[RMDB]
RNA sequence: GGGAACGACUCGAGUAGAGUCGAAAAGCUGUCAUUAUUUCGCUUUCAGCAGUGGCAAAAUGAAACUGAAACAAAACGAAAUGAAAGCAGAGGAAGACGUCUAGCGGAGGAAAGUCGGCAGUGUCCAGAUGGGUGACUCCUUCGGGAGUCACCCAUCAAAAGAAACAACAACAACAAC
Reactivity to 2A3 in 0.01 (KOAc 150mM, MgCl2 10mM, bicine 150mM(pH8.5), 24C), signal-to-noise 1, nucleotides 027 to 126: g000c000u000g010u000c000a010u000u300a000u130u180u080c000g000c000u000u000u140c050a070g000c060a080g040u080g300g000c040a000a090a130a080u300g040a150a000a100c000u070g070a090a000a000c110a000a170a000a160c120g080a000a000a000u150g020a000a000a000g070c000a010g090a000g070g090a220a060g000a050c070g000u000c020u020a000g070c000g000g040a020g020g000a040a040a040g060u070c110g020g110c000a000g120u000g010u120c000c000a000
The record gives the reactivity of an RNA of 177 nucleotides to 2A3. The data come from the RNA Mapping Database (RMDB), library OK1LIB.